[RMDB]
RNA sequence: GGGAACGACUCGAGUAGAGUCGAAAAUGAGAUAUGUGAAGAGCGGUGGCUAAGCCGGCGCGAAGUUUGACAGCGUCGAGUUCCUCAACAUACUUUGUAAGGAGGCGGUUAAUUUCCUCCUUCCAAAUUUCGAACGAAGGCUCAUGGUACUUAGUCCACCGUCUAAAUGAUUCGUCAUUUAGACGGUAAAAGAAACAACAACAACAAC
Reactivity to 2A3 in 0.01 (KOAc 150mM, MgCl2 10mM, bicine 150mM(pH8.5), 24C), signal-to-noise 5, nucleotides 027 to 156: u120g010a020g030a040u080a050u190g100u040g050a140a080g010a010g050c050g030g030u040g010g000c010u040a020a000g040c020c010g030g010c010g000c010g040a060a050g080u100u270u250g080a060c050a010g010c010g000u010c010g000a020g020u090u090c010c000u060c010a030a030c010a030u140a070c040u050u010u010g020u010a000a010g000g010a000g000g000c080g070g030u140u120a120a090u080u080u060c000c010u000c000c000u000u000c010c000a020a010a000u100u120u140c060g040a100a060c050g050a120a010g010g010c010u020c040a040u060g030g000u050a070c030u050u040a020g060u020c020c030
Reactivity to DMS in 0.01 (KOAc 150mM, MgCl2 10mM, bicine 150mM(pH8.5), 24C), signal-to-noise 4, nucleotides 027 to 156: u000g000a110g030a080u000a030u010g030u000g010a090a060g010a070g030c010g020g040u000g010g000c040u000a060a100g000c040c030g010g010c030g010c020g030a090a120g020u010u020u010g020a100c070a250g010c030g040u000c020g000a110g010u000u010c010c020u000c050a090a120c060a090u000a050c140u000u000u000g020u000a050a020g020g010a030g020g020c300g020g010u000u010a070a160u000u010u000c000c000u000c000c000u000u000c040c010a010a050a100u000u000u000c060g020a070a100c110g000a060a050g010g010c030u000c040a090u000g010g010u000a040c030u010u000a070g000u000c010c060